[RMDB]
RNA sequence: GGGAACGACUCGAGUAGAGUCGAAAAAUGGUAAAUACUUUACAAGUGAACCACCCGUAACAUAUUCACCAGCUACAAUUUUAGCUGGUAGUGUCUACACUAAUAGCUGCCUUGUAUCGUCUGAUGGAUCCUCCAUGCUUCGGCAUGGAGAAAAGAAACAACAACAACAAC
Reactivity to DMS in 0.01 (KOAc 150mM, MgCl2 10mM, bicine 150mM(pH8.5), 24C), signal-to-noise 5, nucleotides 027 to 129: a040u020g020g030u030a050a070a090u040a080c090u020u010u030a100c140a040a050g060u040g000a030a000c010c020a070c050c030c140g030u040a040a050c070a050u040a040u070u040c110a000c010c020a000g010c020u000a050c260a090a060u030u040u040u020a020g020c000u000g060g000u010a030g000u020g000u040c060u020a050c080a060c080u030a040a060u030a060g020c080u030g050c080c000u010u040g030u000a030u020c100g030u030c000u000g020a000u020g020g020a080u030c090
Reactivity to 2A3 in 0.01 (KOAc 150mM, MgCl2 10mM, bicine 150mM(pH8.5), 24C), signal-to-noise 8, nucleotides 027 to 129: a010u050g000g000u060a020a110a060u110a060c030u070u070u100a060c070a050a040g000u000g080a030a010c000c000a030c000c010c010g000u030a030a020c020a020u100a120u100u180c070a010c010c000a010g000c010u040a040c080a280a290u070u100u180u190a040g010c010u000g020g000u000a010g000u000g010u010c080u060a040c040a010c050u070a040a040u030a080g070c060u050g060c010c010u020u030g010u020a040u020c050g140u000c100u040g060a050u040g010g020a000u020c000
Chemical mapping of a 170-nucleotide RNA with DMS and 2A3. For 2A3 the reverse transcriptase was SuperScript II with manganese.